The record gives the reactivity of an RNA of 177 nucleotides to 2A3 and DMS. The data come from the RNA Mapping Database (RMDB), library OK2TRN. For DMS, 3,449 sequencing reads were counted. DMS adducts were read by reverse transcription with MarathonRT. For 2A3 the reverse transcriptase was SuperScript II with manganese. The 2A3 profile rests on 3,985 reads. The RNA was probed in 150 mM KOAc, 10 mM MgCl2 and 150 mM bicine (pH 8.5) at 24 C.
RNA sequence: GGGAACGACUCGAGUAGAGUCGAAAAGGCGUCUUCGCUGCCUCGGCCGCCCUGCACUGACCGGUAGCCGCCGUAAUGGCGGCAUUGUUCCCAUAAAAGGAUGUGGGUGUGGGUGCCGAAGUAGCAGCCAUCCAUAGGUGUUCGCACCUAUGGAUGGAAAAGAAACAACAACAACAAC
Reactivity to 2A3 in 0.01 (KOAc 150mM, MgCl2 10mM, bicine 150mM(pH8.5), 24C), signal-to-noise 2, nucleotides 027 to 126: g070g070c080g090u040c070u170u070c110g030c000u000g000c000c010u000c000g000g000c040c050g030c000c020c000u050g010c010a020c010u060g130a060c020c020g000g020u060a030g000c000c010g000c000c000g060u130a130a060u230g000g000c000g000g000c000a000u000u050g010u020u010c000c000c010a040u200a040a160a010a010g100g010a070u160g030u100g240g000g000u030g000u030g000g000g050u040g000c000c000g000a020a000g000u020a000g000c020a010g030
Reactivity to DMS in 0.01 (KOAc 150mM, MgCl2 10mM, bicine 150mM(pH8.5), 24C), signal-to-noise 3, nucleotides 027 to 126: g010g000c090g010u000c060u020u010c120g010c010u000g000c010c030u000c010g010g010c040c040g040c040c010c020u010g030c020a020c010u000g000a090c030c060g010g010u010a180g010c010c000g010c010c010g040u000a130a060u010g010g010c000g020g020c000a010u010u020g010u000u000c030c000c000a080u000a060a070a100a120g000g010a130u000g030u000g020g000g010u000g020u000g000g000g000u000g030c000c000g000a020a040g020u000a030g010c010a180g000